[RMDB]
RNA sequence: GGGAACGACUCGAGUAGAGUCGAAAAAAUGUCCACUGCCCGUAGAUGGCGUCGAUCUGAUUCGGGUUGGUGACCGGGGUACCUGUGAUGAGCAGCCGGUAGCCUUGCCAGUCGUGUGCCAGCGGCCGACAAGAACAACUUUCGAGUUGUUCUUGUCAAAAGAAACAACAACAACAAC
Reactivity to 2A3 in 0.01 (KOAc 150mM, MgCl2 10mM, bicine 150mM(pH8.5), 24C), signal-to-noise 6, nucleotides 027 to 126: a000a010u160g020u020c020c010a050c080u060g020c030c020c020g010u050a070g040a300u050g020g010c010g060u060c030g030a120u040c020u120g040a150u140u110c070g020g050g000u050u080g050g020u050g030a020c010c010g000g010g010g020u120a110c020c010u010g020u050g040a150u090g020a020g030c010a000g030c010c010g020g010u010a020g000c000c000u000u100g040c000c000a020g020u020c010g010u060g030u060g130c020c010a020g000c010g030g010c020c040
Reactivity to DMS in 0.01 (KOAc 150mM, MgCl2 10mM, bicine 150mM(pH8.5), 24C), signal-to-noise 8, nucleotides 027 to 126: a060a050u010g010u000c010c030a120c140u010g020c110c000c030g000u010a060g010a100u000g010g020c040g020u000c060g020a050u000c060u000g010a140u000u000c120g020g000g020u000u000g020g020u010g010a070c020c010g000g000g010g010u010a090c300c010u000g010u000g010a120u020g000a300g010c010a070g000c020c020g000g000u000a130g010c020c000u000u000g010c070c020a080g000u010c040g020u010g020u000g020c020c010a090g010c040g010g000c120c200